[RMDB]
RNA sequence: GGGAACGACUCGAGUAGAGUCGAAAAGCUUUCGCUGGAGAUCGGCCUGUCGCUUGCGGUAUUCGGAAUCUUGCACGCCCUCGCUCAAGCCUUCGUCACUCCAAACGUUUCGGCGAGAAGCAGGCCACUCUGUCAAAAGGUUCGCCUUUUGACAGAGAAAAGAAACAACAACAACAAC
Reactivity to 2A3 in 0.01 (KOAc 150mM, MgCl2 10mM, bicine 150mM(pH8.5), 24C), signal-to-noise 2, nucleotides 027 to 126: g010c010u030u050u130c070g010c080u050g050g030a090g050a150u130c070g050g000c010c050u030g030u110c060g020c070u010u060g030c010g010g000u120a120u080u130c040g060g080a030a090u050c030u050u200g000c040a000c040g040c010c000c000u000c030g000c000u030c050a060a050g010c010c000u020u050c030g100u080c010a030c080u060c030c000a130a050a080c040g030u000u070u080c050g020g000c020g010a040g020a040a010g000c010a000g020g020c010c020a030
Reactivity to DMS in 0.01 (KOAc 150mM, MgCl2 10mM, bicine 150mM(pH8.5), 24C), signal-to-noise 3, nucleotides 027 to 126: g000c060u000u000u000c070g040c000u010g020g000a070g000a050u010c150g010g000c010c030u000g000u000c260g020c040u000u000g010c040g020g010u000a100u000u010c080g010g000a090a100u000c070u000u000g000c070a060c090g010c050c110c020u000c070g000c030u010c070a060a160g010c040c070u000u000c030g010u000c080a130c060u000c100c040a060a040a130c150g000u000u000u000c130g020g000c020g010a050g000a080a070g000c040a060g010g020c020c060a150
The record gives the reactivity of an RNA of 177 nucleotides to 2A3 and DMS. Values cover nucleotides 27 to 126. The reactions ran in a buffer of 150 mM KOAc, 10 mM MgCl2 and 150 mM bicine (pH 8.5), at 24 C.